RNA sequence: GGGAACGACUCGAGUAGAGUCGAAAAUUUUCAAUGAGCAUUUCGUUGCUUUUGGACUGUAGUAACAUAGCUAUUCCCCUUUCGGCGAGACUUGGCGUGUUUCUGUCGUUCUUAGUAUAGCAUAUUUGUAAAACUAAAGGUUCGCCUUUAGUUUUACAAAAGAAACAACAACAACAAC
Reactivity to 2A3 in 0.01 (KOAc 150mM, MgCl2 10mM, bicine 150mM(pH8.5), 24C), signal-to-noise 1, nucleotides 027 to 126: u120u120u000u040c040a060a050u210g040a040g010c040a010u090u180u200c150g100u130u000g000c000u040u000u050u060g010g010a010c030u040g000u040a050g000u030a090a050c050a110u060a090g080c000u030a060u110u000c000c000c000c020u000u140u000c050g020g020c000g010a020g050a050c010u040u060g030g020c020g000u100g000u110u070u010c020u000g010u000c010g010u050u000c020u000u050a140g000u050a090u120a160g060c060a050u070a160u200u040u080
Reactivity to DMS in 0.01 (KOAc 150mM, MgCl2 10mM, bicine 150mM(pH8.5), 24C), signal-to-noise 1, nucleotides 027 to 126: u020u000u000u000c020a000a070u000g030a040g060c010a050u000u020u020c170g010u000u000g010c040u010u000u000u010g010g000a030c260u010g020u000a030g010u000a100a100c100a060u000a060g020c040u000a100u000u000c020c000c020c120u000u000u000c060g010g030c020g010a080g000a040c060u010u000g010g000c110g010u000g020u010u010u000c000u000g000u000c010g010u000u000c000u010u010a090g020u010a060u010a090g000c090a090u010a140u000u000u000

Source: RMDB library RFMREP, as collected in RNAgym. This 177-nucleotide RNA was probed chemically with 2A3 and DMS. Reactivities are given for positions 27 through 126. The RNA was probed in 150 mM KOAc, 10 mM MgCl2 and 150 mM bicine (pH 8.5) at 24 C. DMS adducts were read by reverse transcription with MarathonRT.